About this RNA:
Conditions: 150 mM KOAc, 10 mM MgCl2 and 150 mM bicine (pH 8.5), 24 C. This 177-nucleotide RNA was probed chemically with 2A3 and DMS. For DMS, 2,982 sequencing reads were counted. It was measured as part of the RMDB library TTRINS. For 2A3, 5,710 sequencing reads were counted.
[RMDB]
RNA sequence: GGGAACGACUCGAGUAGAGUCGAAAAGAUAUGGAUGUUGUGGAGCUAAUGUCCAGACGCGAUGAAAGCAAUCGGAAACGAUUGCUGGAGCGUCUGGACGAUAGCGAUGAAACAACAUCCUAAGUCACCAUAGUGGUAACUUCGGUUACCACUAUGGAAAAGAAACAACAACAACAAC
Reactivity to 2A3 in 0.01 (KOAc 150mM, MgCl2 10mM, bicine 150mM(pH8.5), 24C), signal-to-noise 2, nucleotides 027 to 126: g040a030u080a080u200g010g000a000u010g000u010u000g000u010g000g030a000g000c000u020a090a070u170g000u010c000c000a000g040a010c010g040c010g300a300u080g000a070a000a000g000c000a000a010u000c010g060g000a110a020a040c020g010a000u000u010g020c020u000g000g020a000g000c000g010u000c000u000g010g000a000c000g000a000u000a010g000c000g020a300u060g010a000a020a000c000a010a000c000a010u000c000c000u000a020a010g040u000c030a020
Reactivity to DMS in 0.01 (KOAc 150mM, MgCl2 10mM, bicine 150mM(pH8.5), 24C), signal-to-noise 2, nucleotides 027 to 126: g000a050u000a300u010g010g010a020u000g000u000u000g000u000g000g000a050g020c000u030a000a160u010g010u000c000c010a010g000a010c010g020c020g000a110u000g010a170a120a020g010c010a010a010u000c000g000g010a160a140a180c000g000a000u000u000g000c030u000g000g000a030g020c010g010u000c000u000g000g000a000c000g020a020u000a000g000c010g000a090u030g000a150a150a000c000a000a020c000a000u000c000c000u000a010a070g000u010c040a280